[RMDB]
RNA sequence: GGGAACGACUCGAGUAGAGUCGAAAAGAGGACCCCUUCGACGAACAGAAGGAUCUGGUACCGGGGAGGAAUAGCCCAUAGUACAAGGGGAGAUGCUAGGAGUCAGGGGAAGCCAGAACGACUGAGACUAAUCUUUUCAGUUCGCUGAAAAGAUUAGAAAAGAAACAACAACAACAAC
Reactivity to 2A3 in 0.01 (KOAc 150mM, MgCl2 10mM, bicine 150mM(pH8.5), 24C), signal-to-noise 2, nucleotides 027 to 126: g080a010g000g080a030c000c020c000c070u000u000c040g130a080c060g050a170a060c000a070g060a100a000g060g040a090u040c070u050g010g000u040a070c020c010g000g020g000g020a080g040g110a150a110u050a140g010c020c020c020a040u090a030g050u030a030c040a110a130g000g000g000g040a050g000a050u120g060c010u030a010g080g020a050g010u030c000a010g010g000g000g030a020a000g050c050c000a010g010a060a020c040g090a030c030u050g060a030g030a070
Reactivity to DMS in 0.01 (KOAc 150mM, MgCl2 10mM, bicine 150mM(pH8.5), 24C), signal-to-noise 2, nucleotides 027 to 126: g020a080g010g020a130c070c040c030c000u000u000c040g020a180c120g000a220a100c160a090g000a050a060g000g020a120u000c050u000g010g010u000a070c040c050g010g000g010g000a040g020g010a060a110u000a150g000c020c010c020a040u010a070g020u010a060c120a040a090g000g020g000g000a120g000a080u000g000c090u000a060g000g050a160g010u000c040a050g010g020g010g010a070a090g010c060c010a100g000a070a110c090g010a100c070u010g010a140g020a280